[RMDB]
RNA sequence: GGGAACGACUCGAGUAGAGUCGAAAAGAACUCACCAGCAAAUGUUUACGACAAGAUUCGACAUUUGCAAAUUACGUAGCGAUCUUCCAGAAUCUUGUCGAAACGUUCCCAAUCGGUACGCCCUAAACUAGGUGAAUAAGUUCGCUUAUUCACCUAGAAAAGAAACAACAACAACAAC
Reactivity to DMS in 0.01 (KOAc 150mM, MgCl2 10mM, bicine 150mM(pH8.5), 24C), signal-to-noise 6, nucleotides 027 to 126: g000a090a100c090u010c050a080c080c050a100g020c070a040a040a030u010g000u010u000u000a150c040g020a020c010a010a010g010a030u000u000c000g010a060c250a030u000u010u010g020c030a060a060a100u010u020a070c190g000u010a070g010c030g000a040u000c080u010u000c120c070a200g010a030a010u010c000u000u000g010u000c000g000a020a030a140c040g010u000u000c020c000c000a110a070u010c080g010g010u000a050c100g010c020c010c020u000a060a050a140
Reactivity to 2A3 in 0.01 (KOAc 150mM, MgCl2 10mM, bicine 150mM(pH8.5), 24C), signal-to-noise 5, nucleotides 027 to 126: g030a060a040c030u020c060a050c030c020a010g070c040a000a060a090u130g030u050u080u100a120c020g000a000c000a000a010g000a020u000u030c010g020a010c040a070u050u060u110g000c000a000a040a000u130u090a070c120g020u050a030g060c020g050a050u030c040u180u040c120c030a010g010a000a000u000c000u000u010g010u000c000g020a020a020a000c010g000u010u000c020c000c000a000a050u070c020g040g000u020a030c050g050c010c010c000u020a030a040a050
This 177-nucleotide RNA was probed chemically with DMS and 2A3. 2A3 adducts were read by reverse transcription with SuperScript II with manganese. For DMS the reverse transcriptase was MarathonRT. It was measured as part of the RMDB library M2PK90. As a SHAPE reagent, 2A3 marks flexible, mostly unpaired nucleotides at the ribose 2'-OH.